Chemical mapping of a 207-nucleotide RNA with DMS and 2A3. The 2A3 profile rests on 3,725 reads. For DMS, 3,446 sequencing reads were counted. The RNA was probed in 150 mM KOAc, 10 mM MgCl2 and 150 mM bicine (pH 8.5) at 24 C. Reactivities are rounded to 0.1 and cut off at 0 and 3.

RNA sequence: GGGAACGACUCGAGUAGAGUCGAAAAUCACGAAUAGCAAUAACAUCUUCGGUAGAGACAAAGUUAUAAGGAUUAACAGAAGUAUCCUUUGCAUAUGCUAAAAAGCGAGUACCACGAGGAAUAGUAAUGUAAUUUCUAUUCAAUGCAUCUGUACAAGACUCGAUUACCUUUUCGAAGGUAAUCGAGUAAAAGAAACAACAACAACAAC
Reactivity to DMS in 0.01 (KOAc 150mM, MgCl2 10mM, bicine 150mM(pH8.5), 24C), signal-to-noise 2, nucleotides 027 to 156: u010c020a100c040g000a070a080u000a080g000c070a080a120u000a070a080c090a170u000c040u000u000c060g050g000u010a110g020a080g000a090c030a080a090a180g000u000u000a050u000a040a060g020g020a080u000u020a120a300c100a160g010a090a140g000u000a030u000c010c030u000u000u020g020c040a080u010a080u000g020c020u000a010a050a050a070a090g020c100g010a070g020u010a020c010c030a080c110g000a100g010g020a030a030u010a070g020u000a030a050u000g040u010a070a120u000u000u000c010u000a050u000u000c010a070a120u000g000c050a090u010c070u000g030u000a110c100a050a110g000
Reactivity to 2A3 in 0.01 (KOAc 150mM, MgCl2 10mM, bicine 150mM(pH8.5), 24C), signal-to-noise 5, nucleotides 027 to 156: u090c020a010c100g020a020a020u040a050g020c040a030a070u090a130a040c000a070u040c020u100u040c040g080g010u090a040g030a020g020a100c070a060a150a010g010u080u110a110u030a150a010g030g000a020u080u100a100a040c040a060g160a170a010g100u080a020u020c010c000u010u010u040g000c040a050u050a050u200g000c010u070a070a060a050a030a000g060c030g030a030g030u040a040c020c030a020c060g010a020g030g030a010a030u030a050g050u100a020a050u070g040u100a030a140u040u060u020c010u010a010u010u030c010a020a020u070g020c010a040u030c030u110g020u040a040c030a070a030g060